[RMDB]
RNA sequence: GGGAACGACUCGAGUAGAGUCGAAAAAGACAAAAUUCUUGGCAGCGAAUGAGUUUCUCUUAGGGUGUGAAUCUCACUCUACGCUGAAGUUUCGGAAUACCGAUGUAGAAAUCAAACUGUUCGAAGCAUAACGUUUAGGUUUCGACCUAAACGUUAUAAAAGAAACAACAACAACAAC
Reactivity to 2A3 in 0.01 (KOAc 150mM, MgCl2 10mM, bicine 150mM(pH8.5), 24C), signal-to-noise 4, nucleotides 027 to 126: a010g100a030c060a000a150a030a100u100u020c040u060u080g060g020c010a000g000c010g070a130a100u140g020a060g070u030u070u010c040u000c000u010u070a050g040g030g010u050g030u040g110a190a120u070c020u000c090a010c000u020c010u020a030c010g010c000u040g040a090a020g040u000u030u000c030g000g030a080a040u060a140c040c100g000a020u030g040u080a040g100a120a080a020u050c040a060a070a030c080u080g040u050u020c020g020a010a010g040c040
Reactivity to DMS in 0.01 (KOAc 150mM, MgCl2 10mM, bicine 150mM(pH8.5), 24C), signal-to-noise 6, nucleotides 027 to 126: a070g020a150c110a070a070a090a120u000u010c030u000u000g010g010c020a030g010c060g000a130a080u010g010a060g010u000u010u010c030u000c040u010u000a080g020g010g010u000g010u000g010a090a080u010c090u000c010a020c020u000c030u000a100c080g000c050u000g010a080a100g010u000u000u010c020g010g010a090a080u010a140c230c120g020a040u010g000u010a120g000a090a080a040u000c050a060a050a090c160u000g000u000u000c020g000a030a050g020c100